[RMDB]
RNA sequence: GGGAACGACUCGAGUAGAGUCGAAAAAGGAGCCUUGGUCUGAUCAUUUUGAAGUCAGGUGGUGGACUCAUGACUUGUGUAGACUUUCAAAUGGUAACUAUGACAACGCGUGAGAAUUGAAGGGGUAAUCAGACGUGCGAUAGUGCCCAGGGUGAGACCCCCUUCAUCGAUUCGUCGAUGAAGGGGGAAAAGAAACAACAACAACAAC
Reactivity to 2A3 in 0.01 (KOAc 150mM, MgCl2 10mM, bicine 150mM(pH8.5), 24C), signal-to-noise 1, nucleotides 027 to 156: a010g080g020a020g010c010c040u060u030g070g000u020c040u030g100a120u040c050a080u070u070u080u270g090a040a000g050u050c040a030g000g070u030g010g020u020g060g060a050c050u120c080a040u050g040a080c070u170u050g060u000g050u110a050g080a070c000u150u090u060c220a150a110a020u050g050g000u030a150a030c010u020a010u100g050a050c000a020a020c090g000c010g030u060g010a000g020a090a150u080u160g040a040a100g000g010g010g010u040a010a110u070c050a000g020a080c010g060u050g030c020g040a040u020a080g000u040g080c020c040c000a020g010g000g000u090g000a020g010a010